[RMDB]
RNA sequence: GGGAACGACUCGAGUAGAGUCGAAAAAGACUGUAAGAUAAGUAGGAGUGAGGCAGGUAGCCCCAAGACAGAGAAAGGACACUUUAGCAGAGCAGCAUUAGCAAAGCUAUGUGAUCAAGACUGAACCUGUUUUCUACAUGCUGAGGUUGCCCAAUCAUCAUGGAUAAAUGUUCGCAUUUAUCCAUGAAAAAGAAACAACAACAACAAC
Reactivity to DMS in 0.01 (KOAc 150mM, MgCl2 10mM, bicine 150mM(pH8.5), 24C), signal-to-noise 3, nucleotides 027 to 156: a080g030a090c020u010g030u000a080a120g010a140u010a040a160g000u000a060g000g000a120g010u030g030a090g000g000c010a070g000g020u000a180g050c060c010c020c000a040a090g010a110c100a110g010a130g010a090a110a160g010g000a140c030a060c080u000u000u000a110g020c010a060g010a300g020c020a190g000c080a180u000u010a090g050c030a040a080a240g010c010u000a030u000g010u000g010a100u020c060a050a070g010a140c020u010g010a080a070c040c010u000g010u000u000u010u010c010u000a090c060a100u010g020c020u020g020a050g000g030u010u010g010c000c000c030a040a080u000c070a240
Reactivity to 2A3 in 0.01 (KOAc 150mM, MgCl2 10mM, bicine 150mM(pH8.5), 24C), signal-to-noise 4, nucleotides 027 to 156: a000g060a040c070u080g060u170a030a020g030a120u110a190a070g060u060a030g010g070a060g040u100g040a090g040g030c030a010g060g060u090a060g030c030c020c020c030a030a020g070a010c010a010g050a010g080a050a060a030g070g010a010c010a000c000u100u090u090a010g000c020a000g020a000g010c010a000g030c020a130u100u190a080g000c010a020a030a000g000c000u020a030u050g020u030g030a150u060c040a050a040g070a080c030u050g020a020a030c010c010u010g010u000u040u000u030c010u010a040c010a060u100g030c010u030g010a000g030g000u040u060g020c010c010c000a030a050u130c070a010